[RMDB]
RNA sequence: GGGAACGACUCGAGUAGAGUCGAAAAGAUAUGGAAUGCACUCGAUAAGCCUUAUGUCGGAAACGACAUGGGCUUUUGACGAAACAUUCCUAAGUCAAACCGUGUGUUGGUUCGCCAACACACGGAAGUGCAUGAGAAUGUUCGCAUUCUCAUGCACAAAAGAAACAACAACAACAAC
Reactivity to 2A3 in 0.01 (KOAc 150mM, MgCl2 10mM, bicine 150mM(pH8.5), 24C), signal-to-noise 1, nucleotides 027 to 126: g030a020u070a030u120g000g000a040a000u020g000c100a100c110u050c010g120a110u130a270a040g000c000c010u300u300a050u030g000u000c000g030g000a000a120a030c010g000a000c000a000u000g000g030g000c050u000u000u030u020g000a000c020g000a070a100a030c010a000u000u010c000c000u020a100a030g010u000c060a060a030a090c000c020g000u050g000u030g000u000u000g050g000u050u100c160g150c150c000a000a000c000a000c010a000c010g000g000a030a000
Reactivity to DMS in 0.01 (KOAc 150mM, MgCl2 10mM, bicine 150mM(pH8.5), 24C), signal-to-noise 2, nucleotides 027 to 126: g000a030u000a300u000g000g010a010a000u000g010c070a200c300u000c010g030a100u000a030a020g010c000c000u000u000a020u000g010u000c000g030g000a130a060a120c020g000a010c000a020u000g000g000g000c000u000u000u000u000g010a160c090g010a060a110a100c000a000u000u000c000c000u010a020a120g000u000c020a080a220a210c000c000g050u000g040u000g020u000u010g000g000u010u000c300g040c000c000a000a010c000a020c000a000c000g000g010a000a000